[RMDB]
RNA sequence: GGGAACGACUCGAGUAGAGUCGAAAAGGAAGAAUGAAGGGAGAGGGUGGCUCUUCCCUGAGUCACCUGUCAUCUUUGCUGAUGGAUCCCACAUUCUCAUUCAGAUCAGCAAAUCUUUACCAAGUGCGACACUUGUGAUAUUCGUAUCACAAGUGUCAAAAGAAACAACAACAACAAC
Reactivity to DMS in 0.01 (KOAc 150mM, MgCl2 10mM, bicine 150mM(pH8.5), 24C), signal-to-noise 5, nucleotides 027 to 126: g010g000a150a040g000a030a010u000g020a170a110g000g000g000a060g020a250g010g010g010u010g010g010c000u000c000u000u010c120c120c080u000g020a020g020u000c020a020c010c000u010g020u000c030a030u000c030u000u010u010g010c130u000g020a020u000g010g000a280u010c010c000c000a260c030a030u000u000c050u000c090a130u000u000c100a090g000a070u010c050a070g010c080a030a090a060u010c030u000u010u000a120c080c090a080a080g000u000g020c190